[RMDB]
RNA sequence: GGGAACGACUCGAGUAGAGUCGAAAAGAGCAUGUCUUCGGACAUGCUCAAACGAGAAACGGGAAAUAAGCCGAUCCCAGGCGAUCGUACGCCAUACUCGAAAAAGUAUAGUCUUCGGACUAUACAAGUAUACAGGGUAGUUCGCUACCCUGUAUACAAAAGAAACAACAACAACAAC
Reactivity to 2A3 in 0.01 (KOAc 150mM, MgCl2 10mM, bicine 150mM(pH8.5), 24C), signal-to-noise 5, nucleotides 027 to 126: g000a010g000c000a000u000g010u000c020u040u070c260g060g000a000c010a000u000g000c000u000c000a010a010a000c020g010a000g020a040a120a040c050g010g000g090a050a180a200u230a180a030g070c010c010g010a040u040c000c010c010a010g010g000c010g010a020u130c060g050u090a090c040g020c020c010a060u060a110c020u020c030g060a110a080a010a010a030g010u010a000u000a010g000u000c020u010u060c250g080g000a000c000u000a000u000a000c000a000a010
Reactivity to DMS in 0.01 (KOAc 150mM, MgCl2 10mM, bicine 150mM(pH8.5), 24C), signal-to-noise 4, nucleotides 027 to 126: g010a000g010c000a010u010g020u000c010u000u020c240g040g010a010c000a000u000g020c000u000c000a010a030a130c030g000a020g000a040a090a180c050g000g000g000a060a090a120u010a070a200g000c020c010g000a120u000c010c000c000a250g010g010c010g000a050u010c300g010u000a140c040g000c010c030a120u010a090c010u010c020g000a110a070a070a120a070g010u000a010u000a000g000u000c000u000u020c210g030g000a010c010u000a000u000a000c000a030a120
The record gives the reactivity of an RNA of 177 nucleotides to 2A3 and DMS. For 2A3 the reverse transcriptase was SuperScript II with manganese. Source: RMDB library M2PK50, as collected in RNAgym. For 2A3, 8,893 sequencing reads were counted.